RNA sequence: GGGAACGACUCGAGUAGAGUCGAAAAAAUAAGAGUUUGGAUUAACCUAUAGGGAAUUAGCGAUCAAGAAUACAACCUAAGGACCUGGUUGACUUAAUUAUUCCAUAGGUUGGUGGUAGCUAGCGAAGGAAUUAUAUGUAUUCGUACAUAUAAUUCCAAAAGAAACAACAACAACAAC
Reactivity to 2A3 in 0.01 (KOAc 150mM, MgCl2 10mM, bicine 150mM(pH8.5), 24C), signal-to-noise 3, nucleotides 027 to 126: a000a010u300a060a050g030a030g020u080u110u080g060g020a040u080u030a040a050c010c020u050a040u070a220g040g010g030a030a050u050u020a020g020c010g050a030u060c030a040a010g030a150a040u210a140c040a060a050c020c000u050a070a060g080g000a050c020c030u020g030g020u030u040g050a060c010u040u020a020a030u060u080a030u140u040c000c000a000u010a000g000g000u000u010g010g010u010g010g010u000a010g010c050u020a020g060c040g090a090a040
Reactivity to DMS in 0.01 (KOAc 150mM, MgCl2 10mM, bicine 150mM(pH8.5), 24C), signal-to-noise 6, nucleotides 027 to 126: a070a050u010a050a060g010a060g020u000u000u000g030g010a140u000u000a050a080c020c010u000a090u010a130g000g000g000a100a050u010u000a020g010c040g000a030u010c040a050a080g010a130a110u010a090c060a040a040c070c050u010a050a080g010g000a110c300c180u000g000g010u000u000g000a080c060u020u000a020a030u000u000a070u000u000c000c000a070u000a020g000g010u000u000g010g020u000g010g010u000a030g000c030u000a050g010c150g010a120a100